[RMDB]
RNA sequence: GGGAACGACUCGAGUAGAGUCGAAAAUUAUAUGUUGCUUAAUGGUAGGAAUAUGUUCUGAGAAGUGCAUCAUUAGGCAAUUUUGCCAUUAUUCGAACAUCAUAGAGUGCACUUAUACACAAACCUAGGCUAAAUGGCACACCCUAUUGCUACUAGGCCUGUAACAUGGUUUCGACCAUGUUACAGGAAAAGAAACAACAACAACAAC
Reactivity to 2A3 in 0.01 (KOAc 150mM, MgCl2 10mM, bicine 150mM(pH8.5), 24C), signal-to-noise 3, nucleotides 027 to 156: u150u010a080u010a020u170g010u020u020g010c020u010u010a010a000u040g020g050u060a090g090g000a060a060u090a040u180g020u120u150c040u070g040a020g020a170a020g030u070g080c020a040u040c020a050u100u070a030g020g000c010a000a010u120u090u090u040g010c020c000a020u020u030a020u100u050c060g090a020a010c010a030u100c030a050u100a120g120a040g070u020g020c010a010c030u070u100a120u040a060c090a000c010a030a080a010c010c030u010a000g010g000c040u050a030a080a090u040g000g000c010a020c000a040c030c010c030u010a050u080u130g020c010u020a110c010u020a020g030g000
Reactivity to DMS in 0.01 (KOAc 150mM, MgCl2 10mM, bicine 150mM(pH8.5), 24C), signal-to-noise 2, nucleotides 027 to 156: u000u020a020u010a120u040g020u010u000g010c010u010u000a040a050u000g020g000u000a040g000g000a060a110u000a050u000g040u000u010c070u000g000a180g000a130a100g030u000g040c060a020u000c050a100u000u000a100g000g010c000a040a060u000u000u000u000g060c000c020a140u000u000a110u000u010c050g000a120a060c050a100u000c100a130u000a110g000a190g030u000g040c010a090c060u010u000a100u020a060c050a100c060a070a050a130c050c000u010a040g020g010c060u000a070a030a110u000g020g020c000a100c090a050c040c030c030u000a080u000u000g000c020u030a070c060u000a110g010g000